[RMDB]
RNA sequence: GGGAACGACUCGAGUAGAGUCGAAAAUCAAGUAGCCAAGUGCUAUGGGGAGUCUGUGUUAGUUAAUGCUGCUAACACACAUCUUAAGCAUGGCGGUGGUAUCGCUGGUGCUAUUAAUGCGGCUUCAUCUGUAUCUUUUGUUCGCAAAAGAUACAGAAAAAGAAACAACAACAACAAC
Reactivity to 2A3 in 0.01 (KOAc 150mM, MgCl2 10mM, bicine 150mM(pH8.5), 24C), signal-to-noise 4, nucleotides 027 to 126: u090c020a020a030g020u010a000g030c000c030a220a070g050u060g110c030u040a050u070g020g020g030g010a020g030u000c040u040g000u000g000u020u000a010g010u000u080a130a070u300g110c140u050g000c000u030a000a010c000a000c010a000c000a040u050c020u080u090a030a010g010c010a020u020g020g000c070g000g010u050g080g170u110a040u090c030g000c040u080g060g050u040g010c020u040a040u180u140a150a060u110g060c030g000g000c000u030u030c020a030
Reactivity to DMS in 0.01 (KOAc 150mM, MgCl2 10mM, bicine 150mM(pH8.5), 24C), signal-to-noise 4, nucleotides 027 to 126: u010c060a130a120g010u000a030g010c000c020a150a140g010u000g040c020u000a020u010g010g010g010g010a030g010u000c120u000g020u010g000u000u000a010g000u000u010a060a140u020g010c210u010g000c000u000a000a010c000a010c010a050c110a030u000c050u000u010a090a050g010c010a030u000g010g010c030g020g030u000g020g010u010a090u000c050g010c030u010g030g020u010g010c050u010a110u000u000a030a060u000g030c130g000g000c020u010u000c130a120